[RMDB]
RNA sequence: GGGAACGACUCGAGUAGAGUCGAAAAGUAAUGCGGCUUCAGUUAACCAAAUUGUCUUGCGUAAUUCUAAUGGUGCUUGCAUUUGGAACGCUGCUGCAUAUAUGAAACUCUCGGAUGCACUUAAACGGACGUCCUACCUUCGGGUAGGACAAAAGAAACAACAACAACAAC
Reactivity to 2A3 in 0.01 (KOAc 150mM, MgCl2 10mM, bicine 150mM(pH8.5), 24C), signal-to-noise 5, nucleotides 027 to 129: g000u030a010a010u000g000c010g020g000c000u000u000c120a060g000u010u030a040a020c000c000a000a000a000u050u050g110u100c010u000u000g000c030g060u080a060a130u150u100c080u230a140a040u260g170g010u170g030c000u010u020g000c000a000u000u000u000g000g000a000a000c020g000c000u000g000c000u000g000c000a010u040a000u000a000u030g030a090a040a020c030u020c000u000c030g020g050a050u080g030c050a050c070u100u150a120a100a020c070g030g070a040c050